[RMDB]
This 177-nucleotide RNA was probed chemically with DMS. For DMS the reverse transcriptase was MarathonRT. Conditions: 150 mM KOAc, 10 mM MgCl2 and 150 mM bicine (pH 8.5), 24 C. It was measured as part of the RMDB library TTRINS. The DMS profile rests on 502 reads.
RNA sequence: GGGAACGACUCGAGUAGAGUCGAAAAGAUAUGGACGUCCCAAGUCGCAUACGAAAUCUUCGUUCAUAGUCGGAAACGACUAUGAACGAAGACACGUAUGAACUACGACGACGGACGUCCUAAGUCAGUGAAUUAUACCCUUCGGGGUAUAAUUCACAAAAGAAACAACAACAACAAC
Reactivity to DMS in 0.01 (KOAc 150mM, MgCl2 10mM, bicine 150mM(pH8.5), 24C), signal-to-noise 1, nucleotides 027 to 126: g000a020u000a300u030g000g000a000c000g020u000c000c000c000a080a300g000u000c030g000c000a000u000a000c000g020a240a300a300u000c000u000u020c000g030u000u030c000a020u000a020g020u000c000g000g000a100a120a160c030g030a000c000u000a030u000g000a070a000c000g000a000a020g050a020c300a080c020g000u020a030u020g020a080a110c150u000a300c000g060a000c000g000a300c300g000g000a000c000g000u000c000c000u000a000a030g000u000c050a180